[RMDB]
RNA sequence: GGGAACGACUCGAGUAGAGUCGAAAAAAAACUGGUACAGGUAUAGCUAUAUCUGUUAAACCAGAGAGUACAGCUGAUCAAGAGACUUAUGGUGGAGCUUCAGUGUGUCUCUAUUGCCGUGCGCAUACAGGUGACAACUUCGGUUGUCACAAAAGAAACAACAACAACAAC
Reactivity to DMS in 0.01 (KOAc 150mM, MgCl2 10mM, bicine 150mM(pH8.5), 24C), signal-to-noise 5, nucleotides 027 to 129: a060a000a040a100c000u000g000g000u010a000c000a030g020g020u040a020u020a120g010c220u120a100u020a010u010c000u030g010u020u030a000a000a000c020c000a000g020a080g010a060g000u020a000c060a040g030c050u000g020a070u050c070a080a050g020a140g000a040c000u060u040a090u030g020g010u040g000g030a090g010c040u000u070c070a020g020u060g040u040g000u040c000u050c020u030a010u030u020g000c000c030g030u070g030c060g000c030a060u010a080c230a080g000
Reactivity to 2A3 in 0.01 (KOAc 150mM, MgCl2 10mM, bicine 150mM(pH8.5), 24C), signal-to-noise 9, nucleotides 027 to 129: a000a000a000a000c000u010g020g000u010a000c000a000g030g010u010a020u040a030g160c210u100a020u000a000u020c010u000g000u010u030a070a030a010c010c000a000g020a000g000a010g060u080a040c020a020g020c020u050g030a080u080c050a100a030g040a000g060a100c040u110u110a100u210g090g010u080g050g030a030g010c000u050u030c030a040g020u040g010u010g030u090c010u000c000u060a110u030u150g010c010c030g090u100g010c090g020c030a010u090a120c060a060g200
Structure probing data (DMS and 2A3) for a 170-nucleotide construct. High 2A3 reactivity points to a flexible backbone, as in loops and unpaired stretches. Values cover nucleotides 27 to 129. Conditions: 150 mM KOAc, 10 mM MgCl2 and 150 mM bicine (pH 8.5), 24 C. DMS adducts were read by reverse transcription with MarathonRT. It was measured as part of the RMDB library 15KLIB.